[RMDB]
RNA sequence: GGGAACGACUCGAGUAGAGUCGAAAAGAUAUGGACGUCGGCAGUCUUUUGACGCCAUAGUGUCGGAAACGACAUGAUUGGCGAUAAGACUGCGACGUCCUAAGUCAAAGCCCGGUUCGCCGGGCAACUCAGAUUACGUCUUCGGACGUAAUCUGAGAAAAGAAACAACAACAACAAC
Reactivity to 2A3 in 0.01 (KOAc 150mM, MgCl2 10mM, bicine 150mM(pH8.5), 24C), signal-to-noise 1, nucleotides 027 to 126: g040a000u060a050u160g020g010a010c000g000u020c100g290g210c020a000g020u030c050u060u100u120u120g280a140c030g050c030c000a020u000a010g000u050g000u020c000g000g020a070a090a070c050g050a010c010a020u050g030a120u100u110g010g010c000g020a010u010a000a000g010a010c050u000g050c000g000a000c000g020u000c000c000u020a020a000g000u000c020a100a200a020g000c000c040c160g010g030u100u070c290g050c070c000g000g070g110c030a000a000
Reactivity to DMS in 0.01 (KOAc 150mM, MgCl2 10mM, bicine 150mM(pH8.5), 24C), signal-to-noise 1, nucleotides 027 to 126: g000a010u010a300u000g000g040a070c000g030u000c000g110g110c000a000g010u000c000u000u000u000u000g010a280c170g000c000c000a000u000a210g040u010g000u020c000g010g040a300a210a270c010g000a020c000a040u000g000a180u010u000g000g000c010g020a110u000a020a000g020a020c000u000g050c000g000a000c000g000u000c000c000u000a000a050g000u000c000a180a180a240g040c000c000c010g000g010u000u020c250g050c010c010g000g000g000c000a000a010